[RMDB]
RNA sequence: GGGAACGACUCGAGUAGAGUCGAAAAGAAGAGAGUCGACGCAAGCGACGAUAACUGCGGAACGGUAACCGUAGUACCGUAAGGUCAUGGCACGCGAAAGCGAAAGACCGCAUCAUGCCAUAAGAGACAGGUAAUUACGAUUCGUCGUAAUUACCUGAAAAGAAACAACAACAACAAC
Reactivity to 2A3 in 0.01 (KOAc 150mM, MgCl2 10mM, bicine 150mM(pH8.5), 24C), signal-to-noise 8, nucleotides 027 to 126: g130a060a010g100a000g020a010g010u020c020g010a110c040g020c130a070a080g030c010g060a030c030g010a060u060a080a020c020u020g010c000g000g040a060a010c030g080g030u090a120a060c040c030g050u060a050g030u010a030c010c010g020u050a070a060g020g000u040c020a020u030g000g000c010a000c020g050c010g050a100a050a020g010c020g040a060a040a030g040a030c010c010g000c010a070u090c010a010u060g000c000c000a020u040a080a080g060a000g020a050
Reactivity to DMS in 0.01 (KOAc 150mM, MgCl2 10mM, bicine 150mM(pH8.5), 24C), signal-to-noise 7, nucleotides 027 to 126: g010a070a090g010a060g000a170g000u010c020g000a130c040g010c180a090a080g010c010g000a030c030g000a130u020a110a070c040u000g010c000g010g010a280a110c070g010g010u020a040a070c060c100g000u010a060g010u000a020c020c010g010u010a090a050g000g010u010c160a040u010g000g020c010a080c040g000c040g010a090a080a130g010c020g010a050a060a090g010a120c020c010g010c030a060u040c140a040u000g000c010c000a020u010a060a070g010a120g000a190
About this RNA: The record gives the reactivity of an RNA of 177 nucleotides to 2A3 and DMS. DMS (dimethyl sulfate) methylates the pairing face of unpaired adenines and cytosines. It was measured as part of the RMDB library OK1LIB. The RNA was probed in 150 mM KOAc, 10 mM MgCl2 and 150 mM bicine (pH 8.5) at 24 C. For DMS, 17,070 sequencing reads were counted.